[RMDB]
RNA sequence: GGGAACGACUCGAGUAGAGUCGAAAAGAUAUGGAAAUCCAGUACUUUUGACGGAUUUCGAUCGGAAACGAUGUCCGAUAAGUACGGAUUUCCUAAGUCAAAAGGGUAAGCGUUCGCGCUUACCCAACGUACAAGAUUCCUUCGGGAAUCUUGUACGAAAAGAAACAACAACAACAAC
Reactivity to DMS in 0.01 (KOAc 150mM, MgCl2 10mM, bicine 150mM(pH8.5), 24C), signal-to-noise 2, nucleotides 027 to 126: g000a030u000a300u010g000g000a000a010a000u000c000c000a180g050u000a000c000u000u000u010u030g010a250c080g000g000a020u000u000u000c070g020a040u000c160g020g000a120a110a180c030g000a000u000g000u000c000c000g040a150u000a030a000g010u000a000c000g000g000a010u000u000u000c000c000u010a040a080g010u020c020a080a070a150a140g000g000g030u000a000a010g010c000g010u000u000c260g020c000g020c000u000u000a000c000c000c000a000a000
Reactivity to 2A3 in 0.01 (KOAc 150mM, MgCl2 10mM, bicine 150mM(pH8.5), 24C), signal-to-noise 2, nucleotides 027 to 126: g010a000u050a010u080g000g010a000a050a010u030c020c080a100g020u000a010c020u050u210u200u250g300a130c030g010g000a020u040u040u090c080g010a090u100c090g230g130a140a150a020c020g030a010u020g030u040c000c000g030a180u030a160a010g010u010a020c000g000g000a000u020u010u000c000c000u000a020a000g010u020c060a030a060a040a190g020g000g000u010a000a000g000c020g020u070u180c300g000c020g000c140u010u010a000c000c000c000a000a000